Background:
Structure probing data (DMS and 2A3) for a 177-nucleotide construct. Conditions: 150 mM KOAc, 10 mM MgCl2 and 150 mM bicine (pH 8.5), 24 C.
[RMDB]
RNA sequence: GGGAACGACUCGAGUAGAGUCGAAAAAGUCGCUGCAGCAACGGUGGGCUGUACAACUCCCAUCGUCUGGCACCCGGCACACCCGCCGCUUGCCAACUCUCCCCCCGCGCAUACCUGGCUGCAGCGAGCCAAAAUAUUGGUUCGCCAAUAUUUUGGCAAAAGAAACAACAACAACAAC
Reactivity to DMS in 0.01 (KOAc 150mM, MgCl2 10mM, bicine 150mM(pH8.5), 24C), signal-to-noise 7, nucleotides 027 to 126: a100g010u010c010g020c000u000g000c010a020g010c030a170a050c030g000g020u000g000g000g020c300u010g010u030a070c300a140a130c100u000c000c000c000a030u000c030g010u010c180u000g010g000c020a020c040c090c000g020g000c010a090c180a090c160c090c050g000c010c010g000c080u010u000g000c010c010a040a160c150u010c070u000c010c010c000c020c020c020g010c110g010c080a090u010a060c080c050u010g000g010c000u000g000c010a020g000c000g000a020
Reactivity to 2A3 in 0.01 (KOAc 150mM, MgCl2 10mM, bicine 150mM(pH8.5), 24C), signal-to-noise 9, nucleotides 027 to 126: a000g110u030c000g000c000u000g000c000a000g000c020a030a020c010g000g010u010g000g030g040c190u070g050u190a150c080a130a180c040u010c010c000c000a010u020c010g060u030c050u010g010g000c000a010c000c010c000g010g000c030a060c010a050c080c030c010g000c000c000g010c020u020u030g010c010c000a050a100c050u030c040u060c070c000c000c000c010c010g060c010g000c080a040u080a190c000c050u070g110g000c000u000g000c000a000g000c000g000a000